[RMDB]
RNA sequence: GGGAACGACUCGAGUAGAGUCGAAAAAUGAUUCGUAGUGUAAGACGAUCGACAGUCAUCGCUUGCCAGCAGGACCACCAAAGGAAUACGCUUCGGUAAGUACUCGAGAUCCCAAGCGAUAAAACAAGCGACAAGUGUUAUUCGUAACACUUGUCGCAAAAGAAACAACAACAACAAC
Reactivity to DMS in 0.01 (KOAc 150mM, MgCl2 10mM, bicine 150mM(pH8.5), 24C), signal-to-noise 1, nucleotides 027 to 126: a030u040g020a120u000u000c000g010u020a040g010u010g020u000a090a190g000a070c000g000a020u000c050g000a080c190a100g000u000c060a060u030c100g000c000u000u000g030c040c040a080g000c030a010g000g000a300c000c050a050c210c130a030a140a140g020g000a110a110u000a120c100g000c000u000u000c160g000g000u000a010a050g000u000a020c000u000c010g010a000g000a210u000c010c010c000a050a190g020c250g030a180u000a070a050a070a050c300a060a120
Reactivity to 2A3 in 0.01 (KOAc 150mM, MgCl2 10mM, bicine 150mM(pH8.5), 24C), signal-to-noise 2, nucleotides 027 to 126: a000u110g010a030u090u070c050g030u030a040g040u040g100u260a080a070g170a030c010g010a030u030c000g060a080c010a030g150u110c060a060u040c040g000c030u050u000g000c010c020a020g050c000a010g000g080a050c030c000a040c040c080a090a080a090g060g020a090a020u050a070c020g020c010u000u100c020g040g010u020a040a020g060u010a010c000u000c000g000a000g000a020u050c020c000c000a010a000g080c030g080a070u150a130a100a010a030c070a080a080